[RMDB]
RNA sequence: GGGAACGACUCGAGUAGAGUCGAAAAGGAAGUCAGGACCAAGGAGGCCAGCAACCCUGGCUUUUGCUGGGGUGCAGGGAUGUCUCGAGGCUUGCAGAUCACAUCUCACUCUCCAGGAUCUGCUGCCUCCCGUAUGUCCAUUCGUGGACAUACGGGAAAAAGAAACAACAACAACAAC
Reactivity to DMS in 0.01 (KOAc 150mM, MgCl2 10mM, bicine 150mM(pH8.5), 24C), signal-to-noise 3, nucleotides 027 to 126: g000g000a070a050g010u000c030a030g020g000a140c070c050a100a170g010g010a050g010g010c020c040a050g010c020a090a060c030c020c000u000g000g020c010u000u000u010u010g030c010u000g000g010g010g030u000g010c050a060g010g000g010a090u000g010u010c170u000c050g000a060g010g000c010u000u010g000c010a020g000a020u000c010a090c100a100u010c050u000c130a120c090u010c030u000c030c050a210g010g010a020u000c000u000g020c010u000g010c020c020
Reactivity to 2A3 in 0.01 (KOAc 150mM, MgCl2 10mM, bicine 150mM(pH8.5), 24C), signal-to-noise 2, nucleotides 027 to 126: g000g000a080a070g060u120c040a020g000g090a080c000c010a010a080g030g000a010g010g060c030c050a050g030c020a090a300c010c000c010u020g000g040c000u110u140u080u300g030c000u030g000g010g020g010u020g000c000a010g030g050g000a080u070g050u080c020u020c060g010a010g020g000c060u090u120g000c010a000g000a020u040c020a010c000a170u050c070u030c100a050c030u150c030u000c020c010a020g100g000a000u000c020u020g020c020u030g010c010c000
An RNA of 177 nucleotides, treated with DMS and 2A3 and read out base by base. 2A3 adducts were read by reverse transcription with SuperScript II with manganese. DMS adducts were read by reverse transcription with MarathonRT. For DMS, 2,869 sequencing reads were counted.